[RMDB]
Notes:
Source: RMDB libraries RFM100 and RFMREP, as collected in RNAgym. An RNA of 177 nucleotides, treated with 2A3 and DMS and read out base by base. Conditions: 150 mM KOAc, 10 mM MgCl2 and 150 mM bicine (pH 8.5), 24 C.
RNA sequence: GGGAACGACUCGAGUAGAGUCGAAAAGGUGGACGUUUAACUUUACGAUUAUGGACUCAGUUCCAAAAGAUAACUGGUGUUUUAUGUGGGACGAAACCGUGGCGGGUUGAGGUGGAAAUGAAAUGAAAAUAUUUACUUAGUUCGCUAAGUAAAUAUUAAAAGAAACAACAACAACAAC
Reactivity to 2A3 in 0.01 (KOAc 150mM, MgCl2 10mM, bicine 150mM(pH8.5), 24C), signal-to-noise 9, nucleotides 027 to 126: g070g010u050g010g050a030c040g030u060u100u110a120a070c060u090u100u170a050c050g090a120u110u100a090u240g020g010a010c020u030c140a040g020u130u000c020c000a030a060a000a040g100a070u140a090a030c030u040g030g010u060g080u050u040u050u050a090u110g050u090g010g010g010a020c020g040a060a000a010c030c010g010u030g030g020c040g010g030g010u040u090g020a020g020g020u050g020g040a050a060a070u130g030a040a040a040u120g040a090a120
Reactivity to DMS in 0.01 (KOAc 150mM, MgCl2 10mM, bicine 150mM(pH8.5), 24C), signal-to-noise 9, nucleotides 027 to 126: g010g030u010g000g010a090c080g010u010u010u020a070a090c070u010u010u010a080c100g010a110u010u020a100u010g010g010a040c030u010c100a100g010u020u000c040c030a040a050a090a120g000a100u020a040a070c110u000g000g010u010g010u010u010u010u010a040u020g020u010g010g000g010a070c050g000a070a060a070c070c050g020u010g010g020c070g000g010g000u010u010g010a070g010g010u000g000g000a040a040a070u010g010a060a050a080u020g000a090a060